[RMDB]
RNA sequence: GGGAACGACUCGAGUAGAGUCGAAAAGAUAUGGAAACUUAAGUUGUUAGGGAGAUUGGGAGCGAUGGAUCGGAAACGAUCCAGUCGCGAAGAACAAUUCUCCCUAACAACUUAAGUUUCCUAAGUCGCUAUUUAGGAUGUUCGCAUCCUAAAUAGCAAAAGAAACAACAACAACAAC
Reactivity to DMS in 0.01 (KOAc 150mM, MgCl2 10mM, bicine 150mM(pH8.5), 24C), signal-to-noise 1, nucleotides 027 to 126: g020a040u010a300u010g040g000a010a020a000c000u000u000a000a000g060u000u000g010u000u000a010g010g010g000a020g000a070u000u000g010g000g000a080g030c010g020a140u000g020g010a010u000c000g000g000a110a110a300c020g000a000u000c000c000a030g020u000c000g020c000g040a040a100g000a170a170c010a000a020u000u010c000u000c000c000c010u000a000a000c000a000a020c000u000u000a000a000g010u000u000u000c000c000u000a000a140g020u000c080